RNA sequence: GGGAACGACUCGAGUAGAGUCGAAAACAACAUUAAGUCUUCUGCUUCCUUUGUUCAGGUCUUUGUUACCUUACCCAUCUUCCUCAUUAUUUACCGGAUUGUCACGACUUUAAGACCAAUUAAAGCGAUACUAAUUCGGUUUCGACCGAAUUAGUAUAAAAGAAACAACAACAACAAC
Reactivity to 2A3 in 0.01 (KOAc 150mM, MgCl2 10mM, bicine 150mM(pH8.5), 24C), signal-to-noise 3, nucleotides 027 to 126: c040a020a000c030a050u130u160a120a030g040u060c030u080u000c020u060g060c000u050u070c020c030u020u060u100g080u000u070c050a030g020g070u000c030u040u160u110g060u110u060a030c000c000u010u040a050c020c030c000a050u010c000u080u010c000c010u020c030a070u020u130a070u070u150u050a090c030c020g010g020a050u040u050g060u080c040a040c110g050a100c040u030u020u030a040a020g050a050c040c000a040a060u120u040a130a050a000g080c040g060
Reactivity to DMS in 0.01 (KOAc 150mM, MgCl2 10mM, bicine 150mM(pH8.5), 24C), signal-to-noise 5, nucleotides 027 to 126: c050a070a120c140a120u010u000a100a110g010u000c030u000u000c040u000g000c030u010u000c020c030u000u000u000g020u010u000c100a060g010g000u000c050u010u020u000g010u010u000a050c040c030u000u010a140c060c030c030a070u010c040u010u000c020c010u010c060a040u000u010a120u000u000u000a090c070c040g010g000a070u010u010g000u000c070a140c090g010a090c020u000u010u000a030a050g010a150c120c080a060a120u000u000a020a040a070g000c080g010

Structure probing data (2A3 and DMS) for a 177-nucleotide construct. The reactions ran in a buffer of 150 mM KOAc, 10 mM MgCl2 and 150 mM bicine (pH 8.5), at 24 C. Source: RMDB library OK2TST, as collected in RNAgym.